[RMDB]
RNA sequence: GGGAACGACUCGAGUAGAGUCGAAAAGAAGAAAAAAGAAUUUGCACUGUUCAGCUGACUUUGGGCUACUUUUAACCAGGAGCUCAAAACUCCAUUUAAAAGGUUGUCAGCCAGGCAAGUAGGUGGGCCUGAUGUAGUGGUUCGCCACUACAUCAGGAAAAGAAACAACAACAACAAC
Reactivity to 2A3 in 0.01 (KOAc 150mM, MgCl2 10mM, bicine 150mM(pH8.5), 24C), signal-to-noise 1, nucleotides 027 to 126: g060a070a010g060a030a060a000a000a000a070g090a050a050u080u080u030g040c090a130c260u030g040u250u270c130a010g000c010u010g020a020c010u060u020u130g000g010g000c000u150a300c010u050u030u040u090a010a000c060c010a050g000g000a000g000c020u000c000a000a000a020a050c020u000c000c000a010u110u090u080a090a070a000a030g020g000u020u030g020u000c010a010g010c010c000a010g000g000c000a000a070g050u070a010g000g120u090g070g040g000
Reactivity to DMS in 0.01 (KOAc 150mM, MgCl2 10mM, bicine 150mM(pH8.5), 24C), signal-to-noise 2, nucleotides 027 to 126: g000a100a160g030a010a070a050a070a120a100g000a080a050u000u000u000g010c030a120c030u000g000u000u010c180a170g000c020u000g040a010c020u000u000u000g030g010g010c060u020a060c010u010u000u000u010a040a100c300c270a100g000g000a010g000c000u000c180a010a010a100a190c120u000c020c000a100u030u010u040a060a060a080a030g000g000u000u000g020u000c010a000g000c000c050a030g000g010c020a010a070g010u000a060g000g010u010g010g000g000